[RMDB]
Source: RMDB library M2RFOK, as collected in RNAgym. An RNA of 207 nucleotides, treated with 2A3 and read out base by base. 2A3 is a SHAPE reagent: it acylates the 2'-hydroxyl of flexible nucleotides of all four kinds. For 2A3, 537 sequencing reads were counted.
RNA sequence: GGGAACGACUCGAGUAGAGUCGAAAACCUCACUACUUUUUACUGUUCCUAAAGAAUUUGUGACAGGUACAGUAAAACGUAUUGCAAGGUUUAUCAGUUCCUAUAAACAGGUAAAUAACAAUAUAUGAAAAGCAAAGACUGUUCGCAGUCUUUGCAACUAGUCCCACAAGUUCGCUUGUGGGACUAGAAAAGAAACAACAACAACAAC
Reactivity to 2A3 in 0.01 (KOAc 150mM, MgCl2 10mM, bicine 150mM(pH8.5), 24C), signal-to-noise 1, nucleotides 027 to 156: c000c020u020c020a000c020u000a000c010u000u000u000u000u000a010c010u020g000u000u040c000c000u030a060a080a040g170a180a180u140u300u190g100u070g060a030c070a090g000g000u000a000c000a000g000u000a000a000a000a000c000g000u000a000u000u020g000c100a070a060g010g050u020u000u020a140u120c030a040g060u010u080c000c000u020a080u260a000a080a020c080a020g180g060u110a130a110a040u180a180a050c020a060a050u080a020u020a020u180g080a140a060a000a000g000c000a000a010a010g000a000c000u000g000u040u050c210g000c030a000g020u000c000u030u000u000g000c000a000a000